Conditions: 150 mM KOAc, 10 mM MgCl2 and 150 mM bicine (pH 8.5), 24 C. Structure probing data (DMS and 2A3) for a 207-nucleotide construct. It was measured as part of the RMDB library ARCHII. As a SHAPE reagent, 2A3 marks flexible, mostly unpaired nucleotides at the ribose 2'-OH. For 2A3 the reverse transcriptase was SuperScript II with manganese. For DMS the reverse transcriptase was MarathonRT. The DMS profile rests on 2,352 reads. Values cover nucleotides 27 to 156.
[RMDB]
RNA sequence: GGGAACGACUCGAGUAGAGUCGAAAAUUGUGGUUCGGGCAUUCUUAGAGCGGAGGAGACUGCGUGAGGCUGGUUUCACAGAGCAGCGUCCACCUCCCGCUUUCGACGGUGGAAGGAUCACGGGCCGGUGCCUUCUGAGCCCACUAUGACCUAAUAAUCACCUUAAAUGGUUCGCCAUUUAAGGUGAAAAAGAAACAACAACAACAAC
Reactivity to DMS in 0.01 (KOAc 150mM, MgCl2 10mM, bicine 150mM(pH8.5), 24C), signal-to-noise 1, nucleotides 027 to 156: u000u000g010u000g000g010u000u000c030g020g000g020c020a090u010u000c070u000u000a120g000a050g030c020g020g010a300g000g000a150g000a060c070u030g070c000g110u010g030a050g000g000c050u010g020g000u000u000u020c130a170c060a110g020a060g000c030a120g010c020g010u000c050c020a130c010c010u000c010c020c000g000c020u000u000u000c080g010a050c110g000g010u000g040g000a000a050g020g010a210u000c010a040c000g010g000g000c080c020g000g000u000g040c050c020u030u000c020u000g010a140g000c060c010c010a050c000u020a030u010g020a200c030c020u000a020a090u000a080a300
Reactivity to 2A3 in 0.01 (KOAc 150mM, MgCl2 10mM, bicine 150mM(pH8.5), 24C), signal-to-noise 2, nucleotides 027 to 156: u060u020g040u050g030g040u040u040c040g030g030g020c020a040u060u000c140u060u080a000g000a000g080c000g010g010a020g040g000a030g010a030c020u090g000c050g090u110g030a080g080g080c010u020g020g130u100u230u240c090a140c020a010g040a010g020c010a000g000c010g060u050c010c020a160c020c060u060c000c000c020g030c000u020u080u070c040g020a030c010g000g040u030g020g060a130a090g040g030a050u120c040a040c040g020g030g000c040c050g000g020u090g010c000c000u020u140c070u120g040a010g010c000c060c010a010c070u060a130u150g020a010c010c000u000a010a040u080a140a080